Source: RMDB library 15KLIB, as collected in RNAgym. An RNA of 170 nucleotides, treated with DMS and 2A3 and read out base by base. The reactions ran in a buffer of 150 mM KOAc, 10 mM MgCl2 and 150 mM bicine (pH 8.5), at 24 C. The DMS profile rests on 20,077 reads.

RNA sequence: GGGAACGACUCGAGUAGAGUCGAAAAUUGAAGGUAAAACAGCCUGUGGGUGAAACACACCCACAGGGCCCAUUGCGCGCUAGCACUCUGGUAUCACGGUACCUUUGUGCGCCUGUUUUACCGAAGGACGGGUUUCCGUUCGCGGAAACCAAAAGAAACAACAACAACAAC
Reactivity to DMS in 0.01 (KOAc 150mM, MgCl2 10mM, bicine 150mM(pH8.5), 24C), signal-to-noise 3, nucleotides 027 to 129: u060u030g090a140a070g050g040u100a040a000a020a020c000a050g040c010c000u030g040u000g010g000g000u060g020a080a070a100c260a170c010a020c000c000c030a030c000a000g030g000g020c010c020c190a000u070u060g050c000g010c000g000c050u020a090g040c020a010c010u020c020u000g000g000u020a010u060c040a100c100g040g020u010a000c000c040u000u020u020g000u010g020c020g000c020c000u040g030u030u020u000u000a020c010c020g000a040a080g040g010a060c080g020
Reactivity to 2A3 in 0.01 (KOAc 150mM, MgCl2 10mM, bicine 150mM(pH8.5), 24C), signal-to-noise 4, nucleotides 027 to 129: u100u110g050a080a020g010g010u030a020a000a010a000c000a000g010c000c010u000g000u010g010g000g010u000g020a020a080a010c120a000c000a000c060c000c010a000c000a000g000g000g000c000c000c000a110u120u300g010c100g000c020g000c070u090a030g010c000a000c000u000c000u000g000g000u010a020u000c000a050c240g100g010u010a000c000c000u000u010u000g000u000g000c000g010c010c000u000g000u000u000u000u010a010c000c000g000a000a000g050g020a020c060g030